Record summary: This 207-nucleotide RNA was probed chemically with 2A3 and DMS. 2A3 adducts were read by reverse transcription with SuperScript II with manganese. For DMS the reverse transcriptase was MarathonRT. For 2A3, 2,619 sequencing reads were counted.

RNA sequence: GGGAACGACUCGAGUAGAGUCGAAAAGAUUCCUCGUUGUUGAGCGAGGUUUAAACAAAUCGACCACACAAACGUAGAGCCGACUACGGAUUUAUAAAUUAAGGCAUUAAGUGUGACAAGGAGACAAAAAACGAUGUUGUGUUCGCACAACAUCGAAGAUCAAUAAUGCCUUCGGGCAUUAUUGAUCAAAAGAAACAACAACAACAAC
Reactivity to 2A3 in 0.01 (KOAc 150mM, MgCl2 10mM, bicine 150mM(pH8.5), 24C), signal-to-noise 3, nucleotides 027 to 156: g090a050u110u140c010c000u000c000g000u000u000g000u010u020g010a000g010c000g010a000g020g020u030u120u040a020a030a020c080a010a010a000u000c000g000a010c000c010a020c000a000c000a030a180a010c000g000u000a000g010a010g000c000c010g050a020c010u010a000c010g020g000a000u030u300u010a200u090a120a030a020u140u110a000a010g000g010c010a000u100u180a190a100g000u000g000u000g000a010c010a000a090g180g020a110g050a080c100a020a160a040a050a010a000c000g000a000u000g000u000u000g000u010g030u030u030c110g000c050a000c000a000a000c000a000u000c000g010a020a000
Reactivity to DMS in 0.01 (KOAc 150mM, MgCl2 10mM, bicine 150mM(pH8.5), 24C), signal-to-noise 2, nucleotides 027 to 156: g030a290u010u000c000c000u000c020g000u000u000g070u000u030g000a090g030c030g000a030g020g000u010u000u000a080a070a230c110a030a120a150u010c020g020a300c030c000a080c020a160c030a160a070a210c060g000u000a030g000a120g010c050c020g000a090c010u010a030c000g000g030a220u030u030u000a100u020a020a010a080u000u000a080a030g000g030c000a190u000u000a030a170g010u000g030u000g010a130c060a100a080g000g000a300g000a070c060a010a120a000a090a100a180c000g020a000u000g000u000u000g020u000g040u000u000c300g020c010a030c000a020a020c000a020u000c020g010a010a040